Notes
Chemical mapping of a 177-nucleotide RNA with DMS and 2A3. For 2A3, 1,049 sequencing reads were counted. The data come from the RNA Mapping Database (RMDB), library OK2TRN. Reactivities are given for positions 27 through 126. Conditions: 150 mM KOAc, 10 mM MgCl2 and 150 mM bicine (pH 8.5), 24 C. 2A3 adducts were read by reverse transcription with SuperScript II with manganese.

RNA sequence: GGGAACGACUCGAGUAGAGUCGAAAAGGGCGUAACGCAGGCCUCGUUCAUAAGCACUCGUCGGACGAUACUCAUUAGCAAUUUGGGACAGCCAUAGCAUCUGCUCAUCAUUCAAGUUACCAACCAGCCAUCGGGCAUUAUUCGUAAUGCCCGAUGGAAAAGAAACAACAACAACAAC
Reactivity to DMS in 0.01 (KOAc 150mM, MgCl2 10mM, bicine 150mM(pH8.5), 24C), signal-to-noise 1, nucleotides 027 to 126: g010g000g000c010g000u010a110a050c150g000c070a060g000g000c050c020u000c030g030u000u010c090a070u000a130a160g000c120a030c030u000c070g020u000c080g000g000a110c090g000a090u000a080c080u000c030a180u000u010a020g000c140a030a120u000u000u000g010g000g000a070c080a080g000c040c020a040u000a050g020c040a080u000c060u010g000c080u000c010a070u020c070a030u000u000c030a050a100g010u000u000a120c020c030a080a050c100c050a190g000
Reactivity to 2A3 in 0.01 (KOAc 150mM, MgCl2 10mM, bicine 150mM(pH8.5), 24C), signal-to-noise 1, nucleotides 027 to 126: g020g030g000c030g040u060a100a000c040g000c070a030g000g120c010c040u030c030g020u030u050c030a130u030a140a080g010c030a000c040u050c060g140u030c110g070g030a040c010g010a000u090a040c010u000c020a050u090u090a030g000c010a080a170u090u060u130g000g000g030a040c010a010g090c050c010a010u060a030g030c000a070u000c000u030g040c030u020c020a030u050c000a000u080u090c060a060a070g000u030u030a080c050c000a080a030c010c000a020g020